[RMDB]
RNA sequence: GGGAACGACUCGAGUAGAGUCGAAAAUAAUCUCCCUGGCGCGUAGCAUACGUAGAAGCGCAAUGGCGUCGUAAUUCUGGGUGAGGUCAUGUUCGCGAGCCGUGAGGAGUUGCUUGGCCAGGUCUAUUGAGCUCAAUGGCAGCGGAUCAGGCAACGGGUAGCUACUAAUAUUCGUAUUAGUAGCUACAAAAGAAACAACAACAACAAC
Reactivity to DMS in 0.01 (KOAc 150mM, MgCl2 10mM, bicine 150mM(pH8.5), 24C), signal-to-noise 2, nucleotides 027 to 156: u000a070a100u000c060u000c020c010c010u020g000g040c070g000c020g030u000a110g010c040a130u000a050c120g050u000a090g020a050a170g040c080g040c030a120a140u000g010g000c040g000u000c050g030u020a080a150u000u030c030u000g010g000g070u000g020a120g040g020u000c040a100u080g010u000u000c050g030c010g020a110g010c000c030g000u010g010a030g030g020a170g000u000u000g010c030u010u010g010g020c000c020a130g040g040u000c010u000a140u020u000g020a200g000c040u000c040a120a090u010g020g010c000a080g050c100g030g000a060u000c010a080g010g010c020a070a080c050g000g010
Reactivity to 2A3 in 0.01 (KOAc 150mM, MgCl2 10mM, bicine 150mM(pH8.5), 24C), signal-to-noise 3, nucleotides 027 to 156: u130a000a060u050c040u000c010c000c050u050g040g010c030g000c000g050u050a100g080c080a050u070a160c040g040u060a040g050a190a020g050c000g000c060a010a090u100g070g000c030g060u060c000g030u110a080a150u150u150c060u130g000g060g010u050g030a050g000g040u020c050a040u030g040u080u080c050g000c070g030a000g030c000c030g060u100g030a020g020g040a050g020u030u020g010c010u010u030g000g000c020c000a050g000g070u010c040u080a040u040u050g020a070g020c060u100c200a000a040u040g030g000c000a020g040c100g000g060a110u080c000a030g020g000c010a010a010c000g000g030

Chemical mapping of a 207-nucleotide RNA with DMS and 2A3. The RNA was probed in 150 mM KOAc, 10 mM MgCl2 and 150 mM bicine (pH 8.5) at 24 C.